[RMDB]
RNA sequence: GGGAACGACUCGAGUAGAGUCGAAAAACGUUCUACAAUCACGCGCGGGCCAAGUUGCGUGUUCGGGGAAAUAAUUCGCCCAGGCAAAAUAAUAACUUGUACGCCAAGGCGUGAACGCUGCCCGAUAAAACAAACUGUCAUUCGUGACAGUUUGUUUAAAAGAAACAACAACAACAAC
Reactivity to 2A3 in 0.01 (KOAc 150mM, MgCl2 10mM, bicine 150mM(pH8.5), 24C), signal-to-noise 3, nucleotides 027 to 126: a000c020g000u030u000c030u120a120c060a100a080u100c020a020c030g030c030g000c060g030g050g010c020c000a000a000g010u020u040g030c040g030u070g050u070u090c040g040g010g000g040a040a070a050u250a060a200u170u060c080g150c030c000c000a000g000g000c000a040a070a040a100u180a110a060u110a060a010c010u030u030g030u080a060c030g000c050c000a010a060g070g000c020g000u000g010a000a000c010g000c010u060g020c030c000c010g030a130u230a090
Reactivity to DMS in 0.01 (KOAc 150mM, MgCl2 10mM, bicine 150mM(pH8.5), 24C), signal-to-noise 4, nucleotides 027 to 126: a080c040g000u000u000c070u020a100c220a120a110u000c060a040c060g010c020g010c190g010g000g010c180c050a020a030g000u000u000g020c170g020u000g020u010u010c040g010g000g020g010a050a080a080u000a080a140u000u000c170g000c000c010c020a080g010g000c030a040a070a130a090u000a090a100u010a070a030c040u000u000g000u000a080c170g020c010c020a090a120g010g010c060g010u000g000a040a050c030g030c060u000g000c000c010c000g000a090u010a060
Source information
An RNA of 177 nucleotides, treated with 2A3 and DMS and read out base by base. The data come from the RNA Mapping Database (RMDB), library OK2TST.